Notes: The record gives the reactivity of an RNA of 207 nucleotides to 2A3. For 2A3 the reverse transcriptase was SuperScript II with manganese. Values cover nucleotides 27 to 156.

RNA sequence: GGGAACGACUCGAGUAGAGUCGAAAAGCGUAACUGCUGGGUGUAACCCAACUCUAGGUGUGCUGAUUAGCGGGCUUGACUCCGUAACAAAUAGGCACUGGUGGUAAAAAGCAUCCCACCUACUCACAAAGCUCCAAAUUCUUCGGAAUUUGGAGAAGAUGGGCUAGAAGUUCGCUUCUAGCCCAUCAAAAGAAACAACAACAACAAC
Reactivity to 2A3 in 0.01 (KOAc 150mM, MgCl2 10mM, bicine 150mM(pH8.5), 24C), signal-to-noise 1, nucleotides 027 to 156: g000c020g020u040a020a060c040u070g020c010u000g000g030g010u090g090u070a150a240c010c000c020a090a080c050u060c040u110a030g080g030u060g010u020g060c030u020g020a150u060u090a030g040c010g080g000g000c080u140u110g000a090c010u010c090c010g040u000a030a000c020a010a110a010u120a000g060g000c080a010c010u030g000g010u020g000g040u100a150a110a000a000a000g060c010a060u060c010c000c000a050c020c000u050a110c040u090c100a090c050a090a100a010g080c020u000c010c010a000a000a000u000u000c000u010u090c100g000g010a000a000u000u000u000g010g000a010g000a000a000
Description: The reactions ran in a buffer of 150 mM KOAc, 10 mM MgCl2 and 150 mM bicine (pH 8.5), at 24 C.